[RMDB]
RNA sequence: GGGAACGACUCGAGUAGAGUCGAAAACUAUCAAAACUGUACAAUGUAUUUUGAUUAUCUUAUCUUACAUAAUACCAUACUCUGCAACAGACAACCCAAUUGCCGACCGGUCAUUACUGCGCGCCGGCAUUGAUCCGUCAUUCGUGACGGAUCAAUGAAAAGAAACAACAACAACAAC
Reactivity to 2A3 in 0.01 (KOAc 150mM, MgCl2 10mM, bicine 150mM(pH8.5), 24C), signal-to-noise 1, nucleotides 027 to 126: c020u000a020u100c000a040a040a070a040c020u100g120u240a080c050a130a060u080g020u100a100u050u080u010u020g040a010u000u120a050u100c040u090u100a140u050c020u030u060a060c010a010u220a080a040u060a100c020c000a000u010a040c000u040c020u030g000c010a000a020c020a070g060a050c030a010a060c020c000c020a020a050u040u030g070c000c020g030a000c020c010g010g010u000c020a120u060u210a050c070u050g020c030g010c040g000c020c030g040g040
Reactivity to DMS in 0.01 (KOAc 150mM, MgCl2 10mM, bicine 150mM(pH8.5), 24C), signal-to-noise 1, nucleotides 027 to 126: c030u000a070u000c080a060a060a070a100c100u000g010u000a100c150a080a060u010g010u000a070u010u000u010u010g000a050u040u000a070u010c070u000u000a080u000c030u000u020a020c040a040u000a060a050u010a050c050c080a010u000a030c090u000c080u000g000c010a050a110c080a120g000a050c090a060a090c030c030c010a080a060u000u000g000c010c040g010a150c000c000g010g000u000c150a050u000u000a120c080u010g010c110g060c040g000c070c020g010g000